[RMDB]
RNA sequence: GGGAACGACUCGAGUAGAGUCGAAAAUCGGUUGUUUCUCUGAAGGCAUGAUCACCCCGUCCGAUGCGGAAGUUCGUGCUUCCGUCGGACGCGAAAGUCGGACGGCGGCCAUGAGUCGCAACGCAAAUAUACAUUUAGUAGUUCGCUACUAAAUGAAUCAAAGUCAGUAGUUCGCUACUGACUUUGAAAAAGAAACAACAACAACAAC
Reactivity to DMS in 0.01 (KOAc 150mM, MgCl2 10mM, bicine 150mM(pH8.5), 24C), signal-to-noise 1, nucleotides 027 to 156: u000c000g010g000u000u000g020u000u000u000c000u010c000u000g020a140a190g010g000c010a050u010g030a120u000c130a110c000c050c030c000g050u000c010c040g020a070u010g040c030g010g000a010a000g000u000u020c230g000u000g030c000u000u000c000c010g030u010c030g020g010a090c070g010c050g000a060a110a130g030u010c000g020g000a300c000g020g000c050g030g000c000c000a060u020g000a120g000u020c000g000c020a060a080c040g040c010a080a060a090u000a120u000a160c000a050u000u000u000a030g000u000a020g020u000u010c300g060c010u020a000c000u000a000a000a020u000g000a050a170
Reactivity to 2A3 in 0.01 (KOAc 150mM, MgCl2 10mM, bicine 150mM(pH8.5), 24C), signal-to-noise 2, nucleotides 027 to 156: u160c030g010g020u020u000g000u010u030u000c040u010c060u080g080a200a060g050g010c060a060u090g020a040u070c040a060c000c030c010c000g000u000c000c010g030a040u090g060c030g000g010a030a010g000u120u300c170g190u300g090c000u000u010c010c000g010u010c010g060g030a030c040g000c000g000a090a020a000g030u000c000g000g010a010c000g050g030c070g000g000c030c030a160u140g000a020g070u040c030g000c050a060a040c050g050c050a030a100a010u190a020u010a040c010a010u010u000u010a010g000u000a010g010u010u070c250g000c110u000a000c000u000a000a020a000u010g000a010a030
Structure probing data (DMS and 2A3) for a 207-nucleotide construct. It was measured as part of the RMDB library M2RFPK. For DMS the reverse transcriptase was MarathonRT.